[RMDB]
RNA sequence: GGGAACGACUCGAGUAGAGUCGAAAAUAAAACAUGGUUACCAUAAACUAAGCGUGAAGGUAGCCAUGCACGCUUAGUUAAAUAUAAAAGGUGAGCGUUAGGAAAAACCUAAUGCUCAGCAAAAAAACAUAGUUUUCAGGUUCGCCUGAAAACUAUGAAAAGAAACAACAACAACAAC
Reactivity to DMS in 0.01 (KOAc 150mM, MgCl2 10mM, bicine 150mM(pH8.5), 24C), signal-to-noise 1, nucleotides 027 to 126: u010a100a080a190a200c070a020u000g000g020u000u000a110c010c000a080u000a140a180a000c020u000a010a030g010c110g000u000g020a140a150g010g010u000a080g000c060c030a010u010g010c060a030c040g010c010u000u000a010g030u000u020a010a100a070u000a170u020a030a060a080a080g000g000u000g010a010g030c000g020u000u000a000g010g010a070a220a130a060a070c020c000u000a010a000u000g000c000u000c000a000g000c010a000a000a040a130a040a030a140
Reactivity to 2A3 in 0.01 (KOAc 150mM, MgCl2 10mM, bicine 150mM(pH8.5), 24C), signal-to-noise 1, nucleotides 027 to 126: u080a010a040a000a010c020a010u040g050g000u080u080a080c020c000a010u140a110a050a040c020u040a050a040g030c030g060u000g070a050a030g110g000u020a000g060c040c000a000u000g010c000a000c010g060c000u010u060a010g000u020u110a100a090a090u280a060u090a080a110a040a070g000g080u000g030a010g000c000g010u000u000a000g020g000a080a140a120a170a180c000c000u000a010a000u000g030c030u000c000a000g000c030a020a120a000a020a000a000a020